[RMDB]
RNA sequence: GGGAACGACUCGAGUAGAGUCGAAAAGUCGUCCAGCCGCGGCGGGACAACACGGCGGACCAAGUGGCCACGCUGGUGUCUCACUUAGUGAACGUGGGGGCCAUCACCGCGGCGGAGGCCGCUCCGGUCUACUCCGAUCUCCUGAUCCGAGUGCACAGGUUCGGUUCCGGUUCGCCGGAACCGAACCAAAAGAAACAACAACAACAAC
Reactivity to 2A3 in 0.01 (KOAc 150mM, MgCl2 10mM, bicine 150mM(pH8.5), 24C), signal-to-noise 1, nucleotides 027 to 156: g050u050c090g000u000c000c000a040g030c090c010g000c010g030g000c070g020g060g100a120c090a030a010c020a090c020g010g000c020g000g010a000c000c000a010a010g050u020g010g000c010c000a040c050g210c240u300g090g000u070g140u000c130u230c080a000c000u030u170a010g020u110g300a160a170c070g000u000g000g030g000g100g030c040c040a020u070c020a000c050c010g000c060g040g040c000g000g000a030g020g000c000c000g070c010u000c060c140g010g010u070c030u020a010c000u080c000c120g000a010u000c000u080c000c050u110g000a080u110c000c040g030a020g080u120g030c100a050c000a140